[RMDB]
Conditions: 150 mM KOAc, 10 mM MgCl2 and 150 mM bicine (pH 8.5), 24 C. An RNA of 177 nucleotides, treated with DMS and 2A3 and read out base by base.

RNA sequence: GGGAACGACUCGAGUAGAGUCGAAAAACUUUUUGAUUCGUCAAAAAGUAACUACCGAGAAUGCGUCUCGGUAUACGCAAAUAACCCUUGGAAACAAGGGAACAAACUAACGUUUCGACGUUAGUAAGCAUCAAAAAACAUUCGUGUUUUUUGAUGCAAAAGAAACAACAACAACAAC
Reactivity to DMS in 0.01 (KOAc 150mM, MgCl2 10mM, bicine 150mM(pH8.5), 24C), signal-to-noise 2, nucleotides 027 to 126: a060c000u000u000u000u000u000g000a010u000u000c180g020u000c000a000a020a000a000a000g020u020a060a130c200u000a020c010c000g000a000g000a070a170u020g010c180g000u000c020u000c010g010g020u000a020u010a030c260g000c170a040a100a130u000a100a080c000c000c000u000u000g000g000a140a120a120c000a000a020g000g000g040a040a020c240a060a080a050c000u000a000a000c000g000u000u010u000c150g000a050c000g010u000u000a000g000u000a060a090
Reactivity to 2A3 in 0.01 (KOAc 150mM, MgCl2 10mM, bicine 150mM(pH8.5), 24C), signal-to-noise 3, nucleotides 027 to 126: a000c000u000u010u010u000u010g010a010u040u020c070g050u000c040a010a000a000a000a000g010u010a020a050c040u010a020c000c000g000a000g030a080a100u300g090c110g210u030c000u000c000g010g030u000a020u020a000c020g000c030a090a080a030u110a080a130c000c000c000u000u000g000g030a030a030a030c000a000a000g000g000g010a010a010c000a000a070a000c000u010a000a000c010g020u000u070u090c180g080a010c000g000u020u000a000g000u040a000a060